RNA sequence: GGGAACGACUCGAGUAGAGUCGAAAAGAGCUACGCUAUAUGGACGAGAGCUCCGCCAUGCUGGCCAGUGUGACGGCCAACUCGACGACCUCCCCGAAUGACAGCGUCCAGGGGAAACCACCAGUCCAUACGAUUACUGGUUCGCCAGUAAUCGUAUAAAAGAAACAACAACAACAAC
Reactivity to DMS in 0.01 (KOAc 150mM, MgCl2 10mM, bicine 150mM(pH8.5), 24C), signal-to-noise 5, nucleotides 027 to 126: g000a030g010c000u000a050c050g000c040u000a110u060a080u050g000g010a050c030g000a150g000a040g010c060u000c010c040g000c050c010a060u020g000c050u010g010g020c060c020a100g000u020g000u030g020a120c100g000g000c060c020a130a060c020u000c080g000a060c040g000a210c230c060u010c030c020c000c060g000a100a080u030g000a070c090a120g000c080g020u000c030c040a120g030g000g000g000a040a060a080c050c080a070c060c050a070g010u000c030c090
Reactivity to 2A3 in 0.01 (KOAc 150mM, MgCl2 10mM, bicine 150mM(pH8.5), 24C), signal-to-noise 9, nucleotides 027 to 126: g050a000g000c020u040a030c050g020c070u080a050u040a090u300g050g020a050c030g030a040g000a000g180c020u010c010c010g000c010c010a050u110g010c020u040g030g020c010c030a060g040u090g040u070g230a050c050g020g000c000c000a010a030c020u030c030g050a050c010g050a050c000c020u010c000c000c000c000g060a090a060u150g030a030c050a040g040c050g050u020c010c010a030g000g000g000g000a040a020a020c020c020a010c000c020a010g020u000c010c000
The record gives the reactivity of an RNA of 177 nucleotides to DMS and 2A3.
Values cover nucleotides 27 to 126.
DMS adducts were read by reverse transcription with MarathonRT.
The RNA was probed in 150 mM KOAc, 10 mM MgCl2 and 150 mM bicine (pH 8.5) at 24 C.
For DMS, 9,935 sequencing reads were counted.